[RMDB]
RNA sequence: GGGAACGACUCGAGUAGAGUCGAAAAUUGCGAGUCGGGGGGAUCGUCCUCGUUAUCAACGUCAAAGCCAAUAAUAACUGGCAAAGAAAAACAAAACCUAGCUUUCGCUGCCUAAUAAGCAGUAGCAUAGCUGAUCCUCCGUGCAUCGCCCAUGUGCCUUCUAAUACACCUUCGGGUGUAUUAGAAGAAAAGAAACAACAACAACAAC
Reactivity to DMS in 0.01 (KOAc 150mM, MgCl2 10mM, bicine 150mM(pH8.5), 24C), signal-to-noise 2, nucleotides 027 to 156: u010u000g020c000g020a110g030u010c040g030g010g020g030g050g000a030u000c030g030u000c020c070u000c050g040u010u010a100u010c140a070a150c060g000u030c040a120a090a220g000c000c020a020a150u000a140a110u010a080a120c100u010g020g020c030a050a060a160g030a060a100a140a100a200c040a060a070a060a030c030c010u000a050g010c000u000u000u010c010g020c000u000g000c020c000u000a120a120u000a120a070g000c000a020g050u000a050g090c110a030u000a030g000c000u010g000a120u000c000c000u000c010c000g050u010g050c040a100u000c070g000c040c010c010a120u010g000u000g000c100
Reactivity to 2A3 in 0.01 (KOAc 150mM, MgCl2 10mM, bicine 150mM(pH8.5), 24C), signal-to-noise 3, nucleotides 027 to 156: u090u080g010c010g020a010g060u130c090g020g000g010g000g000g010a010u070c010g020u050c010c040u020c030g020u040u060a130u100c080a050a040c040g060u040c040a050a010a040g000c010c030a020a010u130a140a030u080a090a090c070u010g000g000c000a050a100a010g010a020a110a020a000a020c090a020a130a020a010c020c070u070a010g000c030u010u030u020c020g000c000u010g010c000c000u090a120a040u220a160a000g000c010a000g010u030a060g010c040a040u030a020g000c010u020g010a020u000c000c000u000c000c000g020u040g020c010a100u010c030g060c020c020c010a030u080g020u040g090c000